Description
Structure probing data (DMS and 2A3) for a 177-nucleotide construct. For DMS, 888 sequencing reads were counted. The 2A3 profile rests on 949 reads. The reactions ran in a buffer of 150 mM KOAc, 10 mM MgCl2 and 150 mM bicine (pH 8.5), at 24 C.
RNA sequence: GGGAACGACUCGAGUAGAGUCGAAAAAGAGCUUUGCAGUUGAUAAAUUGAGGUUCAGAGAAGUUAAAUGGCUUACUGGGAGUCACAUGGCACCCAGAGCCUAAGCCUUGACCCAGAAUCUCACAACCCCAGUGUACAGAUUCGUCUGUACACUGGGAAAAGAAACAACAACAACAAC
Reactivity to DMS in 0.01 (KOAc 150mM, MgCl2 10mM, bicine 150mM(pH8.5), 24C), signal-to-noise 2, nucleotides 027 to 126: a080g010a170g020c020u000u010u010g000c090a090g030u040u010g000a110u000a030a120a210u010u000g020a020g020g000u010u020c000a090g000a150g000a080a190g040u030u000a020a060a100u010g000g010c000u000u010a000c000u020g000g020g010a020g040u000c030a250c300a110u010g020g020c010a060c000c000c000a010g000a040g010c290c300u010a010a010g010c060c000u000u000g000a110c010c010c020a260g010a000a010u000c010u000c000a050c180a060a040c160
Reactivity to 2A3 in 0.01 (KOAc 150mM, MgCl2 10mM, bicine 150mM(pH8.5), 24C), signal-to-noise 2, nucleotides 027 to 126: a020g130a020g060c070u140u100u140g030c100a060g000u050u080g090a090u090a290a220a100u110u100g010a020g060g030u020u000c020a010g060a020g040a300a030g070u000u060a080a230a150u120g000g010c000u000u050a040c000u050g010g000g020a040g020u000c000a060c100a300u300g000g000c000a010c000c020c000a000g000a000g050c010c000u000a010a010g000c000c000u000u100g010a020c000c000c040a020g010a000a000u030c000u050c040a000c020a010a130c000